[RMDB]
RNA sequence: GGGAACGACUCGAGUAGAGUCGAAAAGGAGUUUAAAUUAGAUUUGCAAACGGACGGUACUAAAUACCGUCACUUUUACGUCUAACUUAUCGUUAACUCUGCAAAAAGAAAACAAGAAAAAGAAAAUGCCUAUAACAAAUUUCGAUUUGUUAUAGGCAAAAGAAACAACAACAACAAC
Reactivity to 2A3 in 0.01 (KOAc 150mM, MgCl2 10mM, bicine 150mM(pH8.5), 24C), signal-to-noise 3, nucleotides 027 to 126: g020g000a020g000u030u030u100a020a050a030u020u000a010g020a060u030u030u200g090c060a010a020a020c020g000g010a000c000g000g030u050a020c050u240a070a070a120u070a030c000c000g000u000c000a030c000u010u000u000u040a030c030g000u020c000u000a010a020c030u130u050a050u120c040g100u010u030a010a020c010u020c010u020g000c070a100a000a010a040a050g090a030a190a020a010c140a060a040g100a140a120a020a000a000g010a020a150a000a020u000
Reactivity to DMS in 0.01 (KOAc 150mM, MgCl2 10mM, bicine 150mM(pH8.5), 24C), signal-to-noise 1, nucleotides 027 to 126: g000g010a050g050u010u020u010a030a040a060u000u000a000g000a030u000u020u050g070c180a010a030a010c140g000g000a000c000g000g000u000a000c070u130a100a080a270u000a010c000c000g010u000c000a020c000u000u000u000u000a050c110g000u000c010u000a000a050c080u010u010a050u060c230g000u060u040a050a050c000u020c000u030g000c160a100a050a100a100a100g030a070a020a000a070c220a040a100g010a020a040a070a100a190g000a080a050a160a030u010

Source information: Structure probing data (2A3 and DMS) for a 177-nucleotide construct. For 2A3, 2,286 sequencing reads were counted. For DMS, 1,169 sequencing reads were counted. The reactions ran in a buffer of 150 mM KOAc, 10 mM MgCl2 and 150 mM bicine (pH 8.5), at 24 C. DMS adducts were read by reverse transcription with MarathonRT.